[RMDB]
RNA sequence: GGGAACGACUCGAGUAGAGUCGAAAACAUUGUGGGUAGGAUAUCAUAAUAACGACCAAGGCCAUGAGAUGGAAGCAGUGCACCACGAUGAUGUCCUGUAAUCACAUUCAUGAUGCAUUGCGAACACGGAUGUUGGUCAAUUCGUUGACCAACAUCCAAAAGAAACAACAACAACAAC
Reactivity to 2A3 in 0.01 (KOAc 150mM, MgCl2 10mM, bicine 150mM(pH8.5), 24C), signal-to-noise 2, nucleotides 027 to 126: c070a110u080u090g020u050g090g090g000u120a030g040g010a020u030a000u090c030a030u030a190a040u110a210a070c050g020a020c010c010a030a060g090g050c030c020a030u070g070a140g010a100u070g040g000a010a060g000c010a000g020u010g050c000a000c000c020a050c000g050a050u050g020a040u000g020u000c030c080u000g150u250a040a060u160c030a000c020a050u110u080c040a030u110g040a020u010g000c000a010u020u040g000c020g070a080a000c070a020c040
Reactivity to DMS in 0.01 (KOAc 150mM, MgCl2 10mM, bicine 150mM(pH8.5), 24C), signal-to-noise 2, nucleotides 027 to 126: c080a120u020u000g000u000g000g020g050u000a090g010g000a060u000a020u010c050a100u010a100a040u000a040a110c120g010a050c100c030a120a060g040g020c010c040a060u010g000a070g040a300u000g000g020a060a040g000c060a030g050u000g000c040a030c000c020a070c090g000a000u010g000a090u000g000u030c100c040u000g000u000a040a130u000c030a040c080a080u020u000c050a060u000g010a080u000g010c010a010u000u000g030c020g010a050a090c260a090c280